Source: RMDB library OK2TST, as collected in RNAgym.
The record gives the reactivity of an RNA of 177 nucleotides to 2A3 and DMS.
For 2A3, 29,025 sequencing reads were counted.
The reactions ran in a buffer of 150 mM KOAc, 10 mM MgCl2 and 150 mM bicine (pH 8.5), at 24 C.
RNA sequence: GGGAACGACUCGAGUAGAGUCGAAAACUUGGAAUGCUGGGUACGCAGCGGCGCACCUUCCGCAACAUUGCCGGCCAUGCGAAAAAUGUUACCGAUCUGUCGUCGCUGUCUUCCUGGACGGCAGAAAGCAGUAAAAUAUAUUCGUAUAUUUUACUGCAAAAGAAACAACAACAACAAC
Reactivity to 2A3 in 0.01 (KOAc 150mM, MgCl2 10mM, bicine 150mM(pH8.5), 24C), signal-to-noise 9, nucleotides 027 to 126: c010u040u100g060g070a130a040u130g020c020u050g030g030g030u050a030c050g010c050a050g040c040g090g000c020g010c010a040c010c000u060u050c020c020g010c010a020a040c020a110u040u140g030c020c000g020g000c010c020a050u100g020c040g100a080a020a010a030a050u130g020u120u060a050c020c030g030a070u020c010u020g020u030c000g000u000c010g020c250u040g050u100c050u070u040c010c000u000g040g020a010c000g000g000c000a000g020a030a000a000
Reactivity to DMS in 0.01 (KOAc 150mM, MgCl2 10mM, bicine 150mM(pH8.5), 24C), signal-to-noise 9, nucleotides 027 to 126: c060u000u000g020g010a110a080u000g010c030u000g010g000g010u010a050c110g020c040a100g010c090g010g010c070g010c040a050c060c040u000u000c030c060g020c060a070a080c090a070u000u000g020c110c020g010g010c050c080a060u000g000c050g010a030a070a060a080a080u000g010u000u010a110c060c080g000a140u000c020u000g010u010c010g010u000c010g000c070u010g000u000c110u000u000c030c020u000g010g010a030c010g000g000c010a010g000a040a080a140